[RMDB]
RNA sequence: GGGAACGACUCGAGUAGAGUCGAAAAGAAAACAUUCGCCGCGUGGGCGAGGUGGCCAAGUUGUUUGCCGACAGCGGAGUGGUGGCCAUCUGCAGCUUCGUUUCGCCCUUCGCCGACGAUCGUGAGAACCUCGUAUGAUAUUCGUAUCAUACGAGGUAAAAGAAACAACAACAACAAC
Reactivity to 2A3 in 0.01 (KOAc 150mM, MgCl2 10mM, bicine 150mM(pH8.5), 24C), signal-to-noise 9, nucleotides 027 to 126: g070a000a080a010a000c060a080u060u050c030g010c050c010g010c020g030u060g040g010g000c020g010a010g000g030u100g020g000c020c040a080a070g030u050u060g090u070u140u120g070c020c020g050a070c040a040g050c050g040g050a060g040u150g150g210u080g050g030c040c020a070u050c040u110g020c030a040g000c010u050u050c030g090u030u070u090c030g020c000c000c000u060u140c040g030c070c010g020a030c010g020a040u150c140g040u090g060a110g040a040
Reactivity to DMS in 0.01 (KOAc 150mM, MgCl2 10mM, bicine 150mM(pH8.5), 24C), signal-to-noise 5, nucleotides 027 to 126: g010a090a060a100a060c080a140u020u000c020g000c000c050g010c030g040u000g010g010g020c000g000a010g020g040u020g000g030c010c080a100a120g010u000u000g010u000u000u010g020c060c040g000a100c170a140g000c020g010g010a050g010u020g000g030u000g000g000c040c050a020u000c020u020g000c060a140g000c050u000u010c050g000u000u030u010c070g000c030c010c000u000u010c030g010c050c020g010a040c030g010a040u020c090g000u030g010a120g010a130
This 177-nucleotide RNA was probed chemically with 2A3 and DMS. The reactions ran in a buffer of 150 mM KOAc, 10 mM MgCl2 and 150 mM bicine (pH 8.5), at 24 C. The data come from the RNA Mapping Database (RMDB), library OK1LIB. For DMS, 14,640 sequencing reads were counted. For 2A3, 15,111 sequencing reads were counted. For 2A3 the reverse transcriptase was SuperScript II with manganese.